Chemical mapping of a 170-nucleotide RNA with 2A3 and DMS. The 2A3 profile rests on 16,126 reads. DMS adducts were read by reverse transcription with MarathonRT.
RNA sequence: GGGAACGACUCGAGUAGAGUCGAAAAAAGGGUUGAGUAGCACUCAAAGGGAGGAAUCCACUCGGAGUAGAACAGAGAAAUCACCUCCAGAGGACCCCUUCAGCGAACAGAGGCGCUCGCACGGGAUACACCAGUUACUUCGGUAACUGGAAAAGAAACAACAACAACAAC
Reactivity to 2A3 in 0.01 (KOAc 150mM, MgCl2 10mM, bicine 150mM(pH8.5), 24C), signal-to-noise 6, nucleotides 027 to 129: a000a000g100g010g000u060u090g020a010g010u110a020g040c030a040c150u030c020a040a060a010g030g000g010a060g010g050a070a050u030c010c000a040c030u040c070g010g010a010g000u130a050g050a160a050c130a050g080a010g040a120a070a050u060c030a050c020c000u010c000c010a020g020a010g020g010a050c000c020c000c000u040u030c050a050g040c020g040a040a020c010a060g020a000g010g020c030g000c030u000c010g000c010a050c040g010g020g020a020u070a090c050a030
Reactivity to DMS in 0.01 (KOAc 150mM, MgCl2 10mM, bicine 150mM(pH8.5), 24C), signal-to-noise 6, nucleotides 027 to 129: a040a050g050g020g000u010u010g010a020g000u020a070g030c030a270c040u000c040a050a070a070g010g010g000a040g030g000a090a100u020c060c040a140c050u040c150g020g010a000g040u070a050g000a040a080c180a110g000a130g020a070a080a070u000c040a130c130c040u000c030c030a070g020a070g000g030a040c080c010c000c030u000u000c000a060g000c030g000a060a040c130a090g000a120g000g000c110g080c010u030c050g050c090a070c010g010g020g020a000u010a090c100a120